[RMDB]
An RNA of 207 nucleotides, treated with 2A3 and read out base by base. It was measured as part of the RMDB library OK3TST. The RNA was probed in 150 mM KOAc, 10 mM MgCl2 and 150 mM bicine (pH 8.5) at 24 C.
RNA sequence: GGGAACGACUCGAGUAGAGUCGAAAAAGUUGGCAUCAUCCACAUAUUGUGAUAGUAAUUCUCGGAUAUCAGUAGUGACUACCGCCAUUGAUAUUUGUUCAUUUGAUGAGUAACUACUAAUGUAUACAUUUUCCAUUUAUAACACUUAUGUAUUAACCCCACCGUUACUUUUCGAAGUAACGGUGGGAAAAGAAACAACAACAACAAC
Reactivity to 2A3 in 0.01 (KOAc 150mM, MgCl2 10mM, bicine 150mM(pH8.5), 24C), signal-to-noise 1, nucleotides 027 to 156: a000g030u040u030g050g050c100a070u040c010a000u030c070c010a000c010a030u130a070u150u200g030u120g050a100u080a050g050u100a250a080u100u000c060u010c040g000g010a000u000a010u080c020a010g010u070a000g000u020g030a130c080u120a090c080c030g050c020c000a000u000u010g040a010u000a040u040u080u010g080u130u130c080a190u180u130u170g030a070u020g000a010g060u000a040a000c030u010a000c000u080a170a040u010g020u080a050u070a080c060a130u000u000u000u240c000c000a020u000u060u090a230u190a160a000c030a000c050u060u100a070u080g090u010a010u100u210a140a200c000